[RMDB]
RNA sequence: GGGAACGACUCGAGUAGAGUCGAAAAGGACAGGGAGGAUCAAUGAGGUACCGGAUCUAGUAGGUACCAAGCUAGCUAUAUAUACGCUCGCUAGCAUAGAGCGUUACCGGAAACGGGACCUGUCCGACAUAGGUCGUAUAUUCGUAUACGACCUAUGAAAAGAAACAACAACAACAAC
Reactivity to DMS in 0.01 (KOAc 150mM, MgCl2 10mM, bicine 150mM(pH8.5), 24C), signal-to-noise 9, nucleotides 027 to 126: g010g010a020c010a020g010g000g010a140g010g010a100u010c090a090a120u000g010a200g010g010u000a010c010c000g010g020a170u010c160u010a110g000u000a110g010g000u000a010c020c010a070a050g010c040u000a030g010c030u000a100u010a100u010a110u010a070c150g010c080u000c130g010c050u000a060g010c070a140u010a080g000a020g010c020g010u000u000a080c010c010g000g000a050a070a160c020g010g000g000a080c010c000u000g000u000c000c010g010a140
Reactivity to 2A3 in 0.01 (KOAc 150mM, MgCl2 10mM, bicine 150mM(pH8.5), 24C), signal-to-noise 8, nucleotides 027 to 126: g010g010a010c020a010g020g030g020a090g070g040a100u080c040a050a100u180g060a070g070g000u000a010c010c010g040g080a080u100c060u100a060g100u050a040g060g020u010a010c000c000a000a000g000c000u030a000g000c030u030a020u010a010u010a010u020a300c080g030c050u040c040g000c020u030a030g030c010a020u090a040g030a000g010c030g030u030u040a070c010c000g000g000a040a050a020c010g000g010g010a000c000c000u000g000u000c000c010g000a000